[RMDB]
RNA sequence: GGGAACGACUCGAGUAGAGUCGAAAAAGCUGAAGAUGCUCGACCCGAAGGUCCACGGGCUCAAGGCCGACGGGAAACCGUCGAGCUCUCCGACGUCGACGGCUAUGUGGCGGAAGGCCGCGGCUGACGCACGCAAGCAAGGUCUGAUUCCGAUCGCUGCAUUAGGUUCAUUCGUGAACCUAAUGCAAAAAGAAACAACAACAACAAC
Reactivity to 2A3 in 0.01 (KOAc 150mM, MgCl2 10mM, bicine 150mM(pH8.5), 24C), signal-to-noise 2, nucleotides 027 to 156: a000g030c040u030g030a070a030g050a040u140g010c070u030c020g090a150c000c000c000g050a110a040g010g060u090c080c020a050c080g010g000g000c040u080c100a060a050g020g010c000c000g010a000c000g000g010g000a030a060a050c000c010g010u020c000g020a050g000c000u050c030u030c040c000g040a030c030g040u020c020g000a100c000g020g000c000u060a100u170g060u020g010g020c040g040g060a100a020g070g010c000c000g000c030g030g000c020u080g020a030c040g060c150a030c060g050c030a010a080g010c010a020a100g060g010u010c060u080g060a140u120u000c010c010g050a080u120c030g010c100
Reactivity to DMS in 0.01 (KOAc 150mM, MgCl2 10mM, bicine 150mM(pH8.5), 24C), signal-to-noise 1, nucleotides 027 to 156: a070g020c030u000g010a080a300g010a090u000g000c020u010c010g030a060c010c000c000g000a150a080g000g000u000c010c060a300c050g030g000g000c070u000c160a120a050g040g050c020c000g010a080c030g040g020g010a100a120a180c010c010g000u010c010g000a060g010c020u000c030u000c010c020g110a120c060g020u000c010g020a300c020g020g000c000u000a110u020g070u020g000g000c040g020g050a230a090g000g030c010c020g040c060g000g010c040u000g000a140c050g020c080a110c040g010c090a070a180g000c060a040a040g010g010u000c000u000g040a300u040u000c010c020g000a100u010c030g010c170
Chemical mapping of a 207-nucleotide RNA with 2A3 and DMS. For DMS, 1,853 sequencing reads were counted.